[RMDB]
Chemical mapping of a 177-nucleotide RNA with 2A3 and DMS.
Values cover nucleotides 27 to 126.
DMS adducts were read by reverse transcription with MarathonRT.

RNA sequence: GGGAACGACUCGAGUAGAGUCGAAAAGGUCGGAGCCUACGGGUGACGGCGUGCCUUUUGCAUAAUGAGCCUACGAGUUGCUCCUCACUAGCAAGAUUAAGACUUUAAGGGUCGUAGUCGAAGCGAAAAAAAGCACUACUUUCGAGUAGUGCUUUUUAAAAGAAACAACAACAACAAC
Reactivity to 2A3 in 0.01 (KOAc 150mM, MgCl2 10mM, bicine 150mM(pH8.5), 24C), signal-to-noise 6, nucleotides 027 to 126: g090g010u250c010g010g020a010g000c000c000u070a100c210g090g000g010u070g040a030c010g000g060c070g000u060g040c000c000u070u060u030u100g060c030a060u090a150a120u260g030a030g080c010c010u020a050c040g010a010g050u030u020g030c000u000c010c000u030c010a060c060u080a020g000c010a030a020g010a020u030u050a080a000g010a030c030u060u080u300a070a070g210g020g000u010c020g010u000a010g000u010c000g040a150a020g020c040g080a090a040
Reactivity to DMS in 0.01 (KOAc 150mM, MgCl2 10mM, bicine 150mM(pH8.5), 24C), signal-to-noise 8, nucleotides 027 to 126: g000g000u010c030g000g010a300g000c000c000u000a100c160g020g000g020u000g000a300c040g000g010c080g050u030g000c030c080u010u020u020u010g000c120a090u010a080a110u030g010a140g020c020c010u000a090c030g000a040g000u000u000g010c040u010c010c000u010c230a070c160u020a160g000c020a050a300g000a030u000u000a030a080g000a020c000u000u010u020a110a150g020g000g010u000c000g010u010a030g010u000c010g000a180a150g010c030g000a000a010